[RMDB]
RNA sequence: GGGAACGACUCGAGUAGAGUCGAAAACCCCGUGAUGGCAUGGAUCUUUGAGACCUGAGAAUUUUCUUCCUUGAUGAAAAUCACAAGUACGAUCCCUGAGGGCAAAACGGUACCGUUCGCGGUACCGCUACUGGCGAUAGUUCGCUAUCGCCAGUAGAAAAGAAACAACAACAACAAC
Reactivity to DMS in 0.01 (KOAc 150mM, MgCl2 10mM, bicine 150mM(pH8.5), 24C), signal-to-noise 2, nucleotides 027 to 126: c070c000c000c120g010u010g000a150u000g010g000c050a050u000g010g000a080u010c050u010u010u000g020a130g000a070c030c020u010g010a110g010a110a080u010u000u000u000c010u000u000c010c180u000u010g000a060u000g000a040a070a020a000u000c030a100c080a040a100g000u000a080c060g010a060u000c010c010c060u000g010a070g000g030g020c110a070a060a070a240c020g000g000u000a000c000c000g010u000u000c170g030c000g000g010u000a000c000c000g020
Reactivity to 2A3 in 0.01 (KOAc 150mM, MgCl2 10mM, bicine 150mM(pH8.5), 24C), signal-to-noise 2, nucleotides 027 to 126: c000c020c010c020g070u100g070a110u110g060g000c030a040u020g010g020a040u040c060u170u140u240g140a140g070a100c020c020u070g040a080g080a300a160u020u000u000u070c010u030u010c060c100u060u240g020a050u040g000a040a040a000a020u070c010a000c000a040a030g050u070a060c080g020a040u000c040c000c020u050g060a080g030g100g000c050a010a100a010a080c020g000g000u010a000c010c000g000u010u060c230g000c000g090g000u000a000c000c000g000